[RMDB]
RNA sequence: GGGAACGACUCGAGUAGAGUCGAAAAACGCUCCAAUCAAUGUUACCAUCUGCCCAUUUACUCUUUUGCAAAUGAUUGGUUAUGGGGAGGGUCAUUCUUAGGUUGAGCUAUGUAGAAUUACCCUUAGCAUUGGAUGGAGUUUCGACUCCAUCCAAUGAAAAGAAACAACAACAACAAC
Reactivity to DMS in 0.01 (KOAc 150mM, MgCl2 10mM, bicine 150mM(pH8.5), 24C), signal-to-noise 4, nucleotides 027 to 126: a090c200g020c040u000c060c060a060a050u000c030a060a060u000g000u010u000a050c050c010a100u010c060u010g020c020c010c000a030u000u000u000a030c020u010c130u000u000u010u000g010c190a080a080a120u020g010a030u000u000g010g000u010u000a030u010g000g010g000g010a020g000g000g020u000c040a010u000u010c090u020u010a070g020g010u000u000g010a070g010c020u000a070u010g020u000a080g000a050a060u000u010a110c010c020c000u010u000a090g010
Reactivity to 2A3 in 0.01 (KOAc 150mM, MgCl2 10mM, bicine 150mM(pH8.5), 24C), signal-to-noise 3, nucleotides 027 to 126: a000c020g020c020u080c030c020a010a000u030c010a000a070u050g020u030u080a020c010c000a070u140c030u100g120c020c020c000a030u160u170u050a120c080u090c020u140u060u070u120g050c060a100a140a170u250g010a040u110u030g000g000u000u000a000u010g020g000g000g030a000g020g000g000u020c010a010u060u010c060u070u140a070g000g030u020u080g010a000g010c000u050a080u190g130u100a060g100a110a020u110u090a140c000c000c000u020u090a100g040